This 177-nucleotide RNA was probed chemically with DMS and 2A3. High 2A3 reactivity points to a flexible backbone, as in loops and unpaired stretches. It was measured as part of the RMDB library TTRDEL. The RNA was probed in 150 mM KOAc, 10 mM MgCl2 and 150 mM bicine (pH 8.5) at 24 C. For 2A3, 12,065 sequencing reads were counted.

[RMDB]
RNA sequence: GGGAACGACUCGAGUAGAGUCGAAAAGAUAUGGAUGAUUCGCGAUAAGGUACGGUCGGAAACGACCGAUACCUUUUGACGCGAUAGUCCUAAGUCAAAGUGUCAUUGAGUUCGCUCAAUGACACAAUCUUAAUGAAGUGUUCGCACUUCAUUAAGAAAAAGAAACAACAACAACAAC
Reactivity to DMS in 0.01 (KOAc 150mM, MgCl2 10mM, bicine 150mM(pH8.5), 24C), signal-to-noise 8, nucleotides 027 to 126: g010a050u000a300u010g010g000a010u000g000a300u010u000c000g000c000g020a130u000a020a010g010g010u000a020c000g000g010u000c000g010g000a090a080a160c010g000a010c000c000g010a050u000a000c000c000u000u000u000u000g010a190c060g010c010g010a010u000a100g010u000c000c000u010a040a150g000u000c020a090a110a110g020u000g000u000c000a010u000u000g000a010g010u000u010c280g020c000u000c000a000a000u000g000a000c000a000c000a020a030
Reactivity to 2A3 in 0.01 (KOAc 150mM, MgCl2 10mM, bicine 150mM(pH8.5), 24C), signal-to-noise 3, nucleotides 027 to 126: g020a030u070a040u150g000g000a010u020g000a010u090u090c000g010c020g050a070u050a210a000g000g000u000a010c010g000g000u010c010g010g020a100a040a040c010g020a000c000c010g000a000u010a000c000c000u000u010u010u060g010a000c000g000c000g000a000u000a010g000u000c000c000u000a140a020g040u030c080a160a050a070g010u020g000u000c000a010u000u000g010a010g040u060u170c300g080c090u010c010a010a000u000g000a000c000a000c000a000a000